An RNA of 177 nucleotides, treated with DMS and 2A3 and read out base by base. For 2A3 the reverse transcriptase was SuperScript II with manganese. Reactivities are given for positions 27 through 126. The 2A3 profile rests on 4,738 reads.
RNA sequence: GGGAACGACUCGAGUAGAGUCGAAAAUAACGUACUUUCGAGUACGUUAAGUCUCCCGCCGCUAGCAGGGCUGAAGAGAAGAUGGAGGAGCUGGUGGUGGAAUUAGGGGGGGAUUCGUCCCCCCCAAGUCCUUUUCUAAGUUCGCUUAGAAAAGGACAAAAGAAACAACAACAACAAC
Reactivity to DMS in 0.01 (KOAc 150mM, MgCl2 10mM, bicine 150mM(pH8.5), 24C), signal-to-noise 3, nucleotides 027 to 126: u010a010a010c000g000u000a010c000u000u010u020c130g010a020g010u000a000c000g010u000u000a020a070g010u000c050u000c000c000c010g010c040c040g020c030u000a020g010c030a080g000g000g000c040u000g020a120a100g000a160g010a090a120g000a080u000g000g000a120g010g010a280g020c020u000g010g010u000g010g040u010g010g010a060a070u020u010a110g010g010g000g000g030g010g010a030u000u010c130g000u000c000c000c000c000c000c000c000a000a010
Reactivity to 2A3 in 0.01 (KOAc 150mM, MgCl2 10mM, bicine 150mM(pH8.5), 24C), signal-to-noise 3, nucleotides 027 to 126: u030a010a000c000g000u000a010c010u040u070u110c170g010a010g000u010a000c000g000u000u000a000a000g000u010c010u010c020c000c000g010c000c010g000c020u020a000g030c020a070g010g180g040c050u060g040a150a030g080a040g040a230a060g060a080u200g030g060a050g000g030a040g030c010u010g010g030u020g010g020u030g030g050a100a140u120u120a220g000g000g000g000g010g000g000a000u020u000c010g020u000c000c000c000c000c010c000c000a000a010